[RMDB]
RNA sequence: GGGAACGACUCGAGUAGAGUCGAAAAGGGACGCCUUUAGAAGAAGAGGCUAGGUGGUAUACCGGUGUGGGAUACUUGGUAAUAUGUAACGCUAAUUGCAUAAGAUUGUAGGACGGAAUUUACAGUCAAAACGGUCCUGCGUUCGCGCAGGACCGAAUCGACAAAACUACUUCGGUAGUUUUGUCGAAAAAGAAACAACAACAACAAC
Reactivity to 2A3 in 0.01 (KOAc 150mM, MgCl2 10mM, bicine 150mM(pH8.5), 24C), signal-to-noise 1, nucleotides 027 to 156: g020g000g040a030c070g070c010c010u080u080u100a170g050a140a070g070a040a000g000a080g020g000c030u030a040g000g050u050g060g090u070a120u010a110c020c000g020g020u160g010u020g030g060g010a020u060a110c050u050u060g020g010u070a090a020u040a040u100g000u010a030a030c010g030c130u030a010a050u100u120g000c000a020u040a030a050g000a100u020u020g080u000a000g010g060a030c020g020g050a040a020u090u040u070a110c030a010g050u040c050a000a050a100a020c040g000g000u000c000c000u000g020c000g000u010u130c250g000c000g040c020a020g000g000a010c000c000g020a000a000
Structure probing data (2A3) for a 207-nucleotide construct. Values cover nucleotides 27 to 156. The RNA was probed in 150 mM KOAc, 10 mM MgCl2 and 150 mM bicine (pH 8.5) at 24 C.